[RMDB]
RNA sequence: GGGAACGACUCGAGUAGAGUCGAAAACGGUCGAAAUUCGUUUCGACCGAAUAUGCUAGCUGAGCACAGCUGCAAUGCUAAGCUGUAAGCCAGCUGCAAGCGCGAGUUCGGCGUUCGCGCCGAACAAGACCAUCCCAAUCUUCGGAUUGGGAUGGUCAAAAGAAACAACAACAACAAC
Reactivity to 2A3 in 0.01 (KOAc 150mM, MgCl2 10mM, bicine 150mM(pH8.5), 24C), signal-to-noise 2, nucleotides 027 to 126: c000g010g000u010c010g010a010a000a060u160u110c190g060u020u000u000c000g010a000c010c000g000a000a010u100a020u000g020c100u110a030g000c000u010g030a010g040c000a000c000a020g000c000u000g020c140a190a170u180g010c030u070a050a040g000c000u000g000u010a080a060g020c000c010a000g000c020u010g020c010a040a030g090c100g030c040g050a080g060u010u000c000g000g020c010g040u000u050c230g000c010g000c090c010g000a000a000c000a000a000
Reactivity to DMS in 0.01 (KOAc 150mM, MgCl2 10mM, bicine 150mM(pH8.5), 24C), signal-to-noise 2, nucleotides 027 to 126: c010g010g040u000c010g030a010a030a020u000u010c140g010u000u000u000c000g020a000c000c000g030a050a030u000a080u000g010c000u000a000g020c000u000g000a120g010c040a080c010a010g010c010u010g000c100a110a100u010g020c120u000a070a050g000c000u000g000u010a070a110g010c030c000a010g010c000u000g020c030a060a110g020c150g000c130g010a150g010u000u010c000g000g010c000g020u010u010c140g010c010g020c000c000g000a000a010c000a060a070
Description: Chemical mapping of a 177-nucleotide RNA with 2A3 and DMS. The RNA was probed in 150 mM KOAc, 10 mM MgCl2 and 150 mM bicine (pH 8.5) at 24 C. For 2A3 the reverse transcriptase was SuperScript II with manganese. Reactivities are given for positions 27 through 126. For DMS the reverse transcriptase was MarathonRT.